The record gives the reactivity of an RNA of 207 nucleotides to 2A3 and DMS. Source: RMDB library M2RFPK, as collected in RNAgym. For 2A3, 1,441 sequencing reads were counted. Values cover nucleotides 27 to 156.
RNA sequence: GGGAACGACUCGAGUAGAGUCGAAAAAAACUUUUGUGACUUGCUGAAACGGGACUAAUCUCCUCACCGAGGCUAAGCAAGUAAAAUACGCCUCUCAUAUCCAUACCUGAGGGUGGUAAGGAAAUAACCUGCAACGCUUCCUUCGGGAAGCGUUGAACGUAAAAUACCGUUUCGACGGUAUUUUACGAAAAGAAACAACAACAACAAC
Reactivity to 2A3 in 0.01 (KOAc 150mM, MgCl2 10mM, bicine 150mM(pH8.5), 24C), signal-to-noise 2, nucleotides 027 to 156: a000a000a000c130u180u120u090u150g080u040g030a030c010u020u020g010c000u030g030a070a110a160c050g010g000g020a010c040u070a080a120u060c050u050c040c000u060c020a050c040c070g050a040g080g000c070u030a050a000g010c010a020a010g040u080a050a080a010a040u060a030c030g020c010c010u050c050u020c010a040u080a040u220c040c030a040u030a130c010c010u020g010a050g030g020g010u020g010g020u020a050a030g030g040a060a100a030u120a060a020c030c020u090g020c000a010a000c010g000c000u000u000c020c000u010u030c120g100g000g000a010a000g000c000g010u000u000g000a010a000
Reactivity to DMS in 0.01 (KOAc 150mM, MgCl2 10mM, bicine 150mM(pH8.5), 24C), signal-to-noise 1, nucleotides 027 to 156: a010a040a070c030u000u000u000u000g020u020g000a100c030u010u000g010c020u020g020a070a110a070c020g040g000g000a040c050u000a080a170u000c050u000c020c010u000c050a230c040c050g000a090g010g020c040u000a080a170g050c000a020a050g000u000a050a100a030a080u000a120c030g050c000c010u000c000u000c040a120u000a270u010c080c040a130u000a090c110c050u020g020a120g030g000g030u010g030g030u000a120a080g000g030a070a080a120u020a050a100c070c020u000g000c010a040a010c000g040c000u000u010c000c010u020u020c300g020g000g010a020a030g050c000g030u000u000g000a020a050